This 177-nucleotide RNA was probed chemically with 2A3 and DMS.
The data come from the RNA Mapping Database (RMDB), library M2PK50.
Reactivities are rounded to 0.1 and cut off at 0 and 3.
RNA sequence: GGGAACGACUCGAGUAGAGUCGAAAAGUGGCACAGUUCGCUGUGCCACAAAGGACUACCCCUCAGGGUUAAGGCCAUACGGACAGCCGGGUCCACUGCCGAAAAUCCGUAGCUUCGGCUACGGAAAGUUACGGAUAAGCUUCGGCUUAUCCGUAACAAAAGAAACAACAACAACAAC
Reactivity to 2A3 in 0.01 (KOAc 150mM, MgCl2 10mM, bicine 150mM(pH8.5), 24C), signal-to-noise 2, nucleotides 027 to 126: g000u010g020g020c020a000c000a020g010u060u120c160g050c150u010g000u010g000c000c000a010c000a000a000a000g000g000a010c000u050a050c000c010c020c060u160c140a050g090g000g000u070u170a150a170g070g000c020c000a040u050a070c020g010g020a010c000a000g000c010c000g010g000g020u000c020c000a000c030u050g000c000c000g010a100a010a010a020u010c000c000g000u010a000g010c010u030u060c190g130g010c000u000a000c000g000g020a040a000a000
Reactivity to DMS in 0.01 (KOAc 150mM, MgCl2 10mM, bicine 150mM(pH8.5), 24C), signal-to-noise 2, nucleotides 027 to 126: g010u020g020g000c000a020c000a010g010u000u030c260g000c000u010g030u010g010c010c010a010c010a010a040a080g010g010a020c030u000a070c020c010c000c210u020c240a110g000g020g000u000u010a040a040g030g010c010c020a080u000a090c050g010g000a020c040a130g000c020c010g040g000g010u010c000c000a210c150u000g020c000c010g000a250a070a080a110u000c000c000g000u000a000g010c000u000u030c180g010g000c000u010a000c000g000g000a010a010a050